[RMDB]
RNA sequence: GGGAACGACUCGAGUAGAGUCGAAAAGGACGCUCUGCGGGCCUGCGCACCUUCCUGAGGUUGGUCGACAACCAAUUCGACAUUUCGCAAACGAAUCGAGGGCUUACGUGUCCGAUUACUACGGCGGCGAUGUAGUGAUAUUCGUAUCACUACAUCGAAAAGAAACAACAACAACAAC
Reactivity to DMS in 0.01 (KOAc 150mM, MgCl2 10mM, bicine 150mM(pH8.5), 24C), signal-to-noise 9, nucleotides 027 to 126: g000g010a100c050g020c030u000c090u000g020c050g010g010g010c050c040u000g010c060g010c070a070c050c030u000u000c050c050u010g010a130g010g010u000u000g010g010u010c090g010a120c150a070a130c070c090a070a130u000u000c020g010a080c080a130u000u000u000c060g010c120a080a070a140c140g000a040a050u000c040g010a120g010g000g000c060u000u010a080c140g010u010g010u000c010c010g010a090u000u000a080c080u000a090c080g010g010c040g000g010
Reactivity to 2A3 in 0.01 (KOAc 150mM, MgCl2 10mM, bicine 150mM(pH8.5), 24C), signal-to-noise 9, nucleotides 027 to 126: g030g010a010c030g000c030u060c050u120g010c040g040g020g090c000c020u050g000c020g000c010a090c010c000u040u060c010c040u090g050a070g050g020u040u060g030g030u130c090g080a050c020a040a040c020c010a020a070u080u060c020g030a030c050a080u100u140u070c080g000c080a090a090a080c070g040a030a020u050c030g030a150g030g010g010c020u060u110a090c100g080u070g040u040c010c000g010a030u040u090a100c060u030a040c040g060g010c000g020g010
Notes
The record gives the reactivity of an RNA of 177 nucleotides to DMS and 2A3. Values are in units of 0.01, from 0 to 300, in steps of 10. The data come from the RNA Mapping Database (RMDB), library OK2TRN. The RNA was probed in 150 mM KOAc, 10 mM MgCl2 and 150 mM bicine (pH 8.5) at 24 C.